Source: RMDB library RNAMAK, as collected in RNAgym. An RNA of 207 nucleotides, treated with DMS and 2A3 and read out base by base.
RNA sequence: GGGAACGACUCGAGUAGAGUCGAAAAUCACUGGUUCGCCAGUGAAAAAAUCCUAAGUCGUCGUUUGACGAACUGUAGCGAUAAGCGUCGGAAACGACGCUUUUGACGCGUAGAGAGUUCCGAGACGAUAUGGAAAAAAGAGGGGUUCGCCCCUCAAGUGUGUUCUACCUUUCGAGGUAGAACACACAAAAGAAACAACAACAACAAC
Reactivity to DMS in 0.01 (KOAc 150mM, MgCl2 10mM, bicine 150mM(pH8.5), 24C), signal-to-noise 1, nucleotides 027 to 156: u000c000a040c000u000g000g020u000u000c300g040c020c000a070g010u060g000a020a000a050a130a170a090u010c000c030u000a020a190g000u000c070g000u000c010g020u000u000u000g030a120c000g000a090a060c000u000g120u000a290g000c020g090a300u000a040a000g020c000g030u010c000g000g000a090a070a200c000g010a040c000g020c030u000u000u000u000g020a170c070g040c030g000u000a130g000a200g030a190g000u000u000c020c000g030a230g010a020c020g000a020u000a270u000g020g000a000a080a120a100a130a180g000a030g060g030g020g000u000u000c030g000c020c010c000c000u000c000a000a280
Reactivity to 2A3 in 0.01 (KOAc 150mM, MgCl2 10mM, bicine 150mM(pH8.5), 24C), signal-to-noise 1, nucleotides 027 to 156: u010c010a010c010u010g000g010u040u000c080g080c040c000a090g000u030g000a060a000a000a000a000a010u060c040c000u090a170a020g080u060c050g000u010c040g050u050u140u260g040a080c020g040a020a000c000u010g080u190a010g020c030g020a030u020a090a000g000c000g000u000c000g040g050a060a050a040c010g000a000c000g050c010u030u020u010u020g060a020c000g000c020g040u160a040g100a000g010a000g070u000u000c030c020g030a040g000a070c000g000a040u000a090u080g020g040a030a080a010a000a030a110g000a010g000g010g000g000u040u180c140g200c000c000c000c050u070c000a000a010
DMS adducts were read by reverse transcription with MarathonRT. The DMS profile rests on 1,794 reads. The RNA was probed in 150 mM KOAc, 10 mM MgCl2 and 150 mM bicine (pH 8.5) at 24 C. Reactivities are given for positions 27 through 156.